Source: RMDB library OK1LIB, as collected in RNAgym.
Chemical mapping of a 177-nucleotide RNA with 2A3.
The RNA was probed in 150 mM KOAc, 10 mM MgCl2 and 150 mM bicine (pH 8.5) at 24 C.
RNA sequence: GGGAACGACUCGAGUAGAGUCGAAAAGACGAUUCCAUGAAUCUCCUUCAGAAUAUACACGUGAAAUGAUGAGUAAAUAUAUGACCGAACUACCUUGUGAAACUUGUCAUGGAAAGCGAUUGAGUCGGCCCACGAAACACUUCGGUGUUUCGUGGGCAAAAGAAACAACAACAACAAC
Reactivity to 2A3 in 0.01 (KOAc 150mM, MgCl2 10mM, bicine 150mM(pH8.5), 24C), signal-to-noise 1, nucleotides 027 to 126: g060a020c090g000a000u000u000c000c000a130u170g000a050a060u000c000u000c000c000u040u000c000a000g170a110a000u250a020u140a050c050a030c160g300u130g000a000a060a000u080g000a050u050g140a190g000u170a000a170a000u110a000u000a200u300g130a030c050c000g000a000a000c000u010a190c020c000u130u090g080u000g050a020a020a020c000u000u000g000u000c000a000u000g000g000a000a130a000g080c000g270a190u100u150g000a150g090u090c040g000